[RMDB]
Structure probing data (DMS and 2A3) for a 177-nucleotide construct.
2A3 adducts were read by reverse transcription with SuperScript II with manganese.
RNA sequence: GGGAACGACUCGAGUAGAGUCGAAAAGAUAUGGAUGGGAACUACUGAAUGACUUGCGUUGAAAUUCGCUAAGGUCGGAAACGACCUUAGCGAAUGGAGCAAGUCCGCUUCAGCCCAUCCUAAGUCACAUCAGAUAAUACUUCGGUAUUAUCUGAUGAAAAGAAACAACAACAACAAC
Reactivity to DMS in 0.01 (KOAc 150mM, MgCl2 10mM, bicine 150mM(pH8.5), 24C), signal-to-noise 6, nucleotides 027 to 126: g010a030u000a290u010g000g000a010u000g010g000g010a110a040c070u030a300c010u000g000a190a010u010g000a060c000u000u000g010c000g010u000u010g010a130a120a040u000u000c000g010c000u000a010a010g000g020u010c000g010g010a060a080a200c010g020a010c000c000u000u000a000g010c000g010a000a000u000g000g010a170g010c000a010a010g000u000c000c020g000c010u000u000c000a010g000c010c000c000a010u000c000c000u000a010a050g010u000c030a280
Reactivity to 2A3 in 0.01 (KOAc 150mM, MgCl2 10mM, bicine 150mM(pH8.5), 24C), signal-to-noise 4, nucleotides 027 to 126: g020a010u060a040u160g010g000a010u030g010g010g040a100a070c140u300a040c010u300g030a000a030u300g000a020c010u000u010g020c020g300u180u090g140a300a300a060u020u010c010g000c000u000a000a010g000g000u000c020g000g010a070a040a010c010g000a000c000c050u010u000a000g000c000g000a000a010u000g010g000a000g000c000a000a000g010u010c000c000g020c000u000u010c000a010g000c020c000c000a000u000c000c000u000a030a010g000u000c010a020
Description:
DMS (dimethyl sulfate) methylates the pairing face of unpaired adenines and cytosines.